RNA sequence: GGGAACGACUCGAGUAGAGUCGAAAAAGAUUUUAGCUUGCCUUAAGCAGUCUUUAUAUCUUCUGUAUAUUAUUUUAAAGUUUAUAGGAGCAAAGUUCGCUUUACUCGCAAUAGCUAUUUUAUUUAUACUUACUCAUGUGUUCGCACAUGAGUAAGUAAAAGAAACAACAACAACAAC
Reactivity to 2A3 in 0.01 (KOAc 150mM, MgCl2 10mM, bicine 150mM(pH8.5), 24C), signal-to-noise 2, nucleotides 027 to 126: a000g070a030u120u070u000u050a000g010c000u010u060g030c000c060u030u030a020a010g000c020a040g040u090c000u040u100u090a150u050a060u090c000u040u010c000u000g010u000a030u000a020u140u000a210u060u190u060u190a300a300a040g000u020u010u020a000u000a010g000g020a000g010c030a060a000a000g000u070u070c010g010c000u040u020u050a080c050u050c030g000c050a070a090u040a110g010c020u020a080u050u080u080u080a150u090u140u050a080u020
This 177-nucleotide RNA was probed chemically with 2A3. The RNA was probed in 150 mM KOAc, 10 mM MgCl2 and 150 mM bicine (pH 8.5) at 24 C. Source: RMDB library RFM100, as collected in RNAgym.